[RMDB]
RNA sequence: GGGAACGACUCGAGUAGAGUCGAAAACACAAUCGCAGUUGGCAAGGCGUCGGUGUCGGCCGGAUCGGUGUCGCGGCGCGCGUCGUAGCCCAACAGGCCGCACAGUUCGAUCAACGCGUCGGCGAUCGCCUGAUUUCAUGUUCGCAUGAAAUCAGGCAAAAGAAACAACAACAACAAC
Reactivity to DMS in 0.01 (KOAc 150mM, MgCl2 10mM, bicine 150mM(pH8.5), 24C), signal-to-noise 2, nucleotides 027 to 126: c030a120c300a060a020u060c100g000c040a050g020u050u010g000g010c010a120a120g000g030c040g040u000c160g000g000u000g000u000c000g000g010c030c000g010g000a070u000c100g010g000u000g000u000c140g030c010g020g020c000g000c170g000c100g000u000c040g030u040a140g010c030c020c020a090a120c170a130g000g000c000c010g000c130a020c030a080g010u020u070c020g050a010u000c030a250a050c110g010c040g000u000c000g030g000c010g040a060u010c150
Reactivity to 2A3 in 0.01 (KOAc 150mM, MgCl2 10mM, bicine 150mM(pH8.5), 24C), signal-to-noise 5, nucleotides 027 to 126: c090a000c030a010a110u090c040g000c070a070g010u090u080g080g000c060a110a090g060g000c010g010u050c020g010g070u080g040u130c060g030g020c040c030g040g010a100u100c050g020g020u030g030u090c100g000c000g020g020c060g000c020g020c070g090u040c020g030u030a050g050c010c000c000a050a040c030a030g080g040c000c010g020c010a000c000a030g060u110u140c020g010a080u050c000a000a110c050g000c030g020u010c020g030g020c010g030a050u060c060
The data come from the RNA Mapping Database (RMDB), library OK1LIB. The record gives the reactivity of an RNA of 177 nucleotides to DMS and 2A3. Reactivities are rounded to 0.1 and cut off at 0 and 3. The RNA was probed in 150 mM KOAc, 10 mM MgCl2 and 150 mM bicine (pH 8.5) at 24 C. For DMS, 1,745 sequencing reads were counted.